[RMDB]
RNA sequence: GGGAACGACUCGAGUAGAGUCGAAAACGCGCGAACGUAAAUUAUAUUGCGCGACGGGCCCAGCACGUGCGGAAAGGGCCCGAAACGCACGUGCGAAAUAACGCGCAAUAUAAUUUACGGAAGCGCGGCGGAUAUAUAUGUUCGCAUAUAUAUCCGCAAAAGAAACAACAACAACAAC
Reactivity to DMS in 0.01 (KOAc 150mM, MgCl2 10mM, bicine 150mM(pH8.5), 24C), signal-to-noise 1, nucleotides 027 to 126: c000g010c010g000c020g020a190a230c000g000u010a000a000a000u000u000a000u000a000u010u000g000c030g020c000g010a210c100g000g000g020c040c010c020a210g020c000a020c010g000u000g000c020g010g000a050a090a140g000g000g000c000c000c020g030a000a030a130c000g000c000a020c020g000u010g000c000g000a090a070a080u070a110a180c040g010c000g000c000a000a010u000a000u000a010a020u000u000u010a000c000g000g030a050a270g000c030g010c000g000
Reactivity to 2A3 in 0.01 (KOAc 150mM, MgCl2 10mM, bicine 150mM(pH8.5), 24C), signal-to-noise 3, nucleotides 027 to 126: c000g010c000g000c000g050a130a010c000g010u000a000a000a000u000u000a000u000a000u000u000g000c000g000c000g010a010c020g030g030g000c010c010c000a000g000c000a000c010g010u010g000c000g000g020a170a060a050g050g030g010c000c010c000g000a010a000a000c000g000c000a000c000g000u010g000c000g030a080a020a020u160a070a020c010g000c000g000c000a000a000u000a000u000a000a000u000u000u000a000c000g000g000a000a000g000c000g000c000g000
Chemical mapping of a 177-nucleotide RNA with DMS and 2A3.
High 2A3 reactivity points to a flexible backbone, as in loops and unpaired stretches.
Reactivities are rounded to 0.1 and cut off at 0 and 3.
Values cover nucleotides 27 to 126.
The 2A3 profile rests on 12,936 reads.
For 2A3 the reverse transcriptase was SuperScript II with manganese.